Source: RMDB library OK3TST, as collected in RNAgym. The record gives the reactivity of an RNA of 207 nucleotides to DMS and 2A3. The RNA was probed in 150 mM KOAc, 10 mM MgCl2 and 150 mM bicine (pH 8.5) at 24 C.

RNA sequence: GGGAACGACUCGAGUAGAGUCGAAAAAGGAACUUCUCCACGAAUUCGCGCUCGACGGGUUCGCGCACGAGCACGUAGGGGGCAUUGUUGGCUUCGCGCCACACCGAGGAUCUCGUGACUGUACGCACGUGCGCCAGGAAAGCUGCGAGGUUAGCCGUACUUAGGGUUAAUUCGUUAACCCUAAGUAAAAAGAAACAACAACAACAAC
Reactivity to DMS in 0.01 (KOAc 150mM, MgCl2 10mM, bicine 150mM(pH8.5), 24C), signal-to-noise 4, nucleotides 027 to 156: a070g020g020a060a090c060u000u000c030u000c020c040a130c060g010a060a110u010u010c030g020c000g010c080u000c060g000a280c030g020g010g050u000u000c040g010c040g030c010a060c050g000a090g040c050a070c040g020u010a170g030g010g040g060g050c170a110u010u020g020u010u000g030g010c030u010u020c140g010c070g020c020c060a050c040a110c080c030g010a090g040g010a080u000c030u000c030g030u000g000a080c040u000g010u010a070c060g010c030a120c100g030u000g010c030g020c020c030a280g010g010a110a070a070g000c030u010g030c010g010a060g010g000u000u000a050g030c020c050g000
Reactivity to 2A3 in 0.01 (KOAc 150mM, MgCl2 10mM, bicine 150mM(pH8.5), 24C), signal-to-noise 6, nucleotides 027 to 156: a000g080g010a050a030c050u070u020c030u010c050c010a060c070g060a070a080u110u040c020g000c010g000c030u030c040g080a080c060g090g030g040u100u100c040g020c010g000c030a020c050g030a020g000c030a000c060g020u110a100g030g010g010g000g000c050a090u050u190g090u050u050g010g000c010u030u050c150g020c040g000c050c000a020c000a020c020c010g050a150g050g060a100u020c020u000c030g060u040g060a100c030u070g060u150a020c080g000c040a010c020g010u010g000c030g000c020c010a010g030g050a090a010a000g010c120u140g000c110g020a010g030g000u030u070a010g010c020c020g040
For 2A3 the reverse transcriptase was SuperScript II with manganese.